[RMDB]
RNA sequence: GGGAACGACUCGAGUAGAGUCGAAAAUUGAUUUAGAUAUCUUUGCUUCCUUCAACACAAACGUUAGCUGAGUGUAUGAUGGGGAGAUCUUCACAACUAAGCUUUCUUCAGAUUUAAGAGCAAUGGGAACGAGAUAAGAAUUCGUUCUUAUCUCGUUAAAAGAAACAACAACAACAAC
Reactivity to 2A3 in 0.01 (KOAc 150mM, MgCl2 10mM, bicine 150mM(pH8.5), 24C), signal-to-noise 8, nucleotides 027 to 126: u040u050g020a010u040u060u100a100g060a150u080a040u130c020u060u050u070g020c010u030u020c010c000u020u030c020a030a020c020a000c020a050a120a020c070g090u190u140a060g020c210u040g030a020g040u030g020u060a230u110g050a060u080g020g000g010g000a050g000a010u010c020u120u100c050a050c020a170a090c070u080a090a020g020c000u050u080u000c000u100u070c040a070g030a300u110u120u130a100a020g020a000g020c020a040a060u090g040g000g030
Reactivity to DMS in 0.01 (KOAc 150mM, MgCl2 10mM, bicine 150mM(pH8.5), 24C), signal-to-noise 9, nucleotides 027 to 126: u010u010g000a050u000u010u000a150g010a120u010a040u000c010u000u000u000g010c080u000u000c010c010u000u000c040a040a040c020a020c040a050a150a080c080g010u010u010a100g020c080u000g010a300g010u000g000u000a060u000g000a050u010g010g000g000g010a040g000a040u000c020u000u000c060a070c150a050a070c120u000a070a110g010c070u000u000u000c040u000u000c110a080g000a140u010u000u010a060a070g010a050g010c040a050a070u010g010g010g010
The record gives the reactivity of an RNA of 177 nucleotides to 2A3 and DMS. It was measured as part of the RMDB library OK2TST. For DMS the reverse transcriptase was MarathonRT. For DMS, 20,014 sequencing reads were counted.